[RMDB]
RNA sequence: GGGAACGACUCGAGUAGAGUCGAAAAUCUACGAGUCCGAGACAAAGAAUGAGCGAUUGGCCCCACUGCCCCGCAAACCCACAACGGCUGGAGGGCAAGACUUGAGUAGCCGUUAUUACUGGGUCUAUACCUAUCAGCACUGGCUGGACUUGUGUAACGAUCAAUAUGCGUUCGCGCAUAUUGAUCGAAAAGAAACAACAACAACAAC
Reactivity to 2A3 in 0.01 (KOAc 150mM, MgCl2 10mM, bicine 150mM(pH8.5), 24C), signal-to-noise 1, nucleotides 027 to 156: u130c090u050a020c010g010a010g010u010c010c050g060a000g000a040c080a070a190a000g060a110a120u060g030a030g100c080g070a100u060u210g040g010c010c070c000c030a040c080u050g000c000c000c000c000g070c090a110a050a030c010c020c000a030c030a070a000c050g010g000c000u000g000g010a020g010g000g000c030a010a000g050a020c070u170u190g150a030g060u040a000g060c080c030g100u090u000a100u120u120a010c040u050g000g000g000u000c000u040a060u050a130c010c000u150a130u160c020a000g020c050a010c220u060g000g040c030u020g000g000a010c000u070u030g010u000g000u040a150a060